[RMDB]
RNA sequence: GGGAACGACUCGAGUAGAGUCGAAAAUGCUUCCUUUUCCCAGAAUCGUUAAGCCCCGACUCCCACUAGCACCUCGUACCAACCUCGCCCCACCCCAUCCUCCUGCCUUCCCGCGCUCCGGUGUCCCAGAACGACUCUUGUUCGCAAGAGUCGUUCUAAAAGAAACAACAACAACAAC
Reactivity to 2A3 in 0.01 (KOAc 150mM, MgCl2 10mM, bicine 150mM(pH8.5), 24C), signal-to-noise 2, nucleotides 027 to 126: u150g010c020u050u090c020c010u010u040u030u030c000c000c000a010g040a040a070u070c080g030u060u070a050a040g010c010c010c000c000g030a050c040u010c060c040c000a050c020u030a010g020c010a030c010c000u040c000g060u080a040c000c020a030a080c000c010u010c020g040c000c000c000c000a010c000c000c000c000a020u020c000c020u050c000c000u010g000c010c000u010u030c030c000c000g040c020g020c010u060c010c010g000g020u040g000u000c010c000c000
Reactivity to DMS in 0.01 (KOAc 150mM, MgCl2 10mM, bicine 150mM(pH8.5), 24C), signal-to-noise 1, nucleotides 027 to 126: u070g000c070u000u000c010c040u000u030u000u070c000c010c030a180g000a110a100u020c070g020u000u020a150a140g000c030c010c020c040g000a160c150u000c040c050c000a060c130u030a050g000c090a010c060c100u000c060g050u000a080c000c020a090a210c040c040u010c050g000c000c010c000c020a120c070c000c030c030a100u060c050c000u020c000c040u000g030c100c040u000u000c030c000c020g000c010g050c000u000c130c110g000g120u000g050u010c000c000c020